[RMDB]
RNA sequence: GGGAACGACUCGAGUAGAGUCGAAAAGACGUGGAGGUUUCGCGCCCUCCUUUGCGCGUAAGUACGUCGAAAUUCGGUGCUGUGGAUCGCACCGUCUGAUCCAUUAGAUAUCCGCUUUGUGCCGCGGUUGGGCAUUUACACUUACCCGAAAGGGGAAAUAUAUAUCCCGAUUCGUCGGGAUAUAUAUAAAAGAAACAACAACAACAAC
Reactivity to DMS in 0.01 (KOAc 150mM, MgCl2 10mM, bicine 150mM(pH8.5), 24C), signal-to-noise 3, nucleotides 027 to 156: g010a060c030g010u000g010g010a110g020g010u010u000u000c050g020c060g000c130c070c050u000c030c020u000u000u000g020c010g030c030g010u000a040a080g020u000a060c040g030u000c030g010a090a050a120u000u000c040g000g030u000g020c020u000g010u000g010g010a060u010c040g010c020a300c090c090g000u000c030u010g010a060u000c000c020a110u010u000a070g000a150u000a070u000c010c020g020c110u010u000u010g020u010g030c040c020g010c040g010g000u000u000g020g010g020c020a080u000u000u000a070c080a070c030u000u010a150c010c000c010g000a070a090a140g000g000g010g010a030a050
Reactivity to 2A3 in 0.01 (KOAc 150mM, MgCl2 10mM, bicine 150mM(pH8.5), 24C), signal-to-noise 3, nucleotides 027 to 156: g030a000c030g030u050g030g120a080g090g040u070u070u090c010g010c010g020c000c050c010u100c020c050u030u020u090g030c040g000c000g020u030a080a020g060u030a030c020g010u030c040g060a140a050a020u110u070c010g000g000u010g010c010u050g040u110g070g040a040u040c020g000c030a070c090c000g010u020c030u030g000a030u000c010c010a030u120u200a040g060a080u070a040u100c050c000g040c050u070u150u080g040u060g030c020c010g040c020g070g060u090u070g030g000g000c000a000u050u030u090a030c060a010c020u050u080a070c040c000c000g090a040a020a020g010g010g000g000a000a090